RNA sequence: GGGAACGACUCGAGUAGAGUCGAAAAACGGCCAAGAUCCUCUACCGGCGCGACCUGCCCCUGAAGGUGGUGCGCUUCUAUAAGAACAACAUGGUCACGGGCAUCGAGAUAUCAGACAGGUUGGUGGCGAACGUUAUCGAAUAGCGAGAAUCAGGGAACUUUAAGCUUGGUUCGCCAAGCUUAAAGUAAAAGAAACAACAACAACAAC
Reactivity to DMS in 0.01 (KOAc 150mM, MgCl2 10mM, bicine 150mM(pH8.5), 24C), signal-to-noise 2, nucleotides 027 to 156: a130c040g060g040c060c010a020a150g000a090u000c020c010u000c040u020a060c030c000g030g060c040g060c020g030a070c060c010u000g000c050c000c020c020u000g010a020a080g040g010u000g010g010u010g030c010g020c020u000u010c070u000a160u010a040a080g010a070a060c060a040a080c050a080u000g000g030u000c000a100c060g020g050g040c040a110u000c040g010a090g000a110u000a030u000c070a100g010a080c050a050g000g030u010u000g010g000u000g000g030c020g000a060a070c070g030u000u020a090u000c050g000a050a300u000a080g010c070g030a110g000a080a090u010c050a120g000g000g020a100
Reactivity to 2A3 in 0.01 (KOAc 150mM, MgCl2 10mM, bicine 150mM(pH8.5), 24C), signal-to-noise 2, nucleotides 027 to 156: a050c010g030g010c040c010a020a000g020a120u080c040c030u010c030u100a040c070c030g030g010c000g010c000g020a000c000c000u040g040c000c000c010c040u030g000a000a000g030g000u000g020g100u120g010c020g000c020u070u040c110u060a270u050a110a040g080a110a050c020a020a000c020a120u170g010g010u040c030a040c070g020g010g050c060a060u040c130g040a050g030a080u110a030u140c050a010g050a140c030a020g010g050u020u030g050g030u040g000g000c050g000a060a000c030g000u030u110a040u130c030g070a150a080u070a120g070c050g000a020g020a040a030u050c020a020g030g000g030a020